RNA sequence: GGGAACGACUCGAGUAGAGUCGAAAAAGCUGCUCGAAAUCGGCGGAAAGGACCCCGCUAUCGGGAGCGGCUAGCAGCGAGGGUUGCCGCUCCAGCCGCGCUAUGAAGCAGGCAUAGCAGAUUUACAGACGUACUAUUAGUUCGCUAAUAGUACGUCAAAAGAAACAACAACAACAAC
Reactivity to DMS in 0.01 (KOAc 150mM, MgCl2 10mM, bicine 150mM(pH8.5), 24C), signal-to-noise 7, nucleotides 027 to 126: a100g010c000u000g000c000u000c050g000a040a110a080u010c140g010g000c030g010g000a070a120a150g020g000a180c130c080c000c030g010c020u000a090u000c080g010g010g000a030g010c010g000g010c010u000a040g020c070a060g020c080g000a090g010g010g010u000u000g010c020c000g000c010u000c010c010a070g000c050c020g010c140g010c020u000a070u010g010a120a070g030c040a180g010g010c010a040u010a020g000c010a080g010a110u000u000u000a100c280a150
Reactivity to 2A3 in 0.01 (KOAc 150mM, MgCl2 10mM, bicine 150mM(pH8.5), 24C), signal-to-noise 6, nucleotides 027 to 126: a000g020c010u020g000c010u000c040g020a050a090a120u140c070g010g000c040g010g040a100a130a080g210g040a060c040c010c000c000g000c020u060a060u090c040g030g010g010a000g000c000g010g000c010u040a030g040c030a010g040c020g140a120g040g140g040u050u050g000c010c000g000c000u000c010c000a010g000c010c010g050c020g000c010u040a070u300g110a110a010g000c040a030g030g030c010a010u030a010g000c010a010g040a080u140u110u070a070c060a040